[RMDB]
RNA sequence: GGGAACGACUCGAGUAGAGUCGAAAACUUAGGGCAUUGCCCGGUGAUGUACAGUCCCUUUCCACAACGUUGGAGAUGAAGCUGGGCUUUCGAGUCUGCGCCUGCAUAUUCCUACGACUUCUCAGAGAGACAGACAAGGUUUCGACCUUGUCUGUCUAAAAGAAACAACAACAACAAC
Reactivity to 2A3 in 0.01 (KOAc 150mM, MgCl2 10mM, bicine 150mM(pH8.5), 24C), signal-to-noise 3, nucleotides 027 to 126: c010u050u060a030g000g000g000c020a270u030u300g010c000c000c000g000g030u080g000a190u160g030u130a100c050a040g080u100c010c000c030u000u040u070c050c000a050c060a220a060c110g020u110u000g000g000a030g000a040u120g080a040a020g000c020u020g000g020g050c030u020u120u070c070g060a000g020u000c000u040g020c040g060c020c000u010g060c030a010u020a120u130u040c000c000u070a080c030g090a050c060u110u080c020u040c110a020g050a000g020
Reactivity to DMS in 0.01 (KOAc 150mM, MgCl2 10mM, bicine 150mM(pH8.5), 24C), signal-to-noise 2, nucleotides 027 to 126: c040u000u030a030g020g000g010c000a080u010u070g000c000c020c040g030g000u000g010a170u020g000u000a050c120a150g000u010c010c020c020u000u020u030c000c010a030c190a150a160c070g010u030u000g000g000a040g020a100u010g000a110a110g010c020u000g020g000g000c000u000u010u010c070g030a050g010u020c030u000g000c120g000c010c010u020g040c050a100u000a090u010u020c020c020u010a020c010g040a080c090u010u000c050u010c040a130g030a170g000
This 177-nucleotide RNA was probed chemically with 2A3 and DMS. Conditions: 150 mM KOAc, 10 mM MgCl2 and 150 mM bicine (pH 8.5), 24 C. The data come from the RNA Mapping Database (RMDB), libraries RFM100 and RFMREP. The 2A3 profile rests on 1,040 reads.